Background: Source: RMDB libraries RFM100 and RFMREP, as collected in RNAgym. This 177-nucleotide RNA was probed chemically with DMS and 2A3. 2A3 adducts were read by reverse transcription with SuperScript II with manganese. For DMS the reverse transcriptase was MarathonRT.

RNA sequence: GGGAACGACUCGAGUAGAGUCGAAAAGUUAGGAGGCAUAAAUCAAUCUUGAUCAUCAAUACUUUACUGUAUUGUAUUGAUCUAUUUGACUUGAGGUCUUUUUGAGGAGGAGCUUUGCUUCUGCUAAUUGUACUCUUGCUUUCGAGCAAGAGUACAAAAAAGAAACAACAACAACAAC
Reactivity to DMS in 0.01 (KOAc 150mM, MgCl2 10mM, bicine 150mM(pH8.5), 24C), signal-to-noise 3, nucleotides 027 to 126: g010u010u020a100g000g000a030g020g010c030a080u010a060a070a090u010c010a020a050u010c190u010u010g000a020u000c000a000u010c010a010a010u000a000c000u000u010u040a150c160u000g000u000a000u010u010g000u010a030u020u020g020a000u000c000u010a020u010u000u000g020a030c170u000u010g000a070g010g000u000c000u000u000u030u010u020g000a090g010g000a030g030g010a050g010c010u000u030u030g000c020u000u000c020u000g000c100u020a050a120
Reactivity to 2A3 in 0.01 (KOAc 150mM, MgCl2 10mM, bicine 150mM(pH8.5), 24C), signal-to-noise 3, nucleotides 027 to 126: g120u090u080a070g020g030a010g000g030c040a080u040a120a100a020u020c010a000a040u040c070u050u070g000a010u010c000a000u000c010a020a000u000a000c010u120u190u150a170c220u110g000u020a000u010u000g040u140a080u000u110g000a000u000c000u000a020u000u010u030g000a020c040u020u070g030a050g030g070u060c000u060u070u020u060u120g080a060g010g050a020g000g000a000g010c010u010u060u150g000c000u030u080c010u020g080c010u030a070a040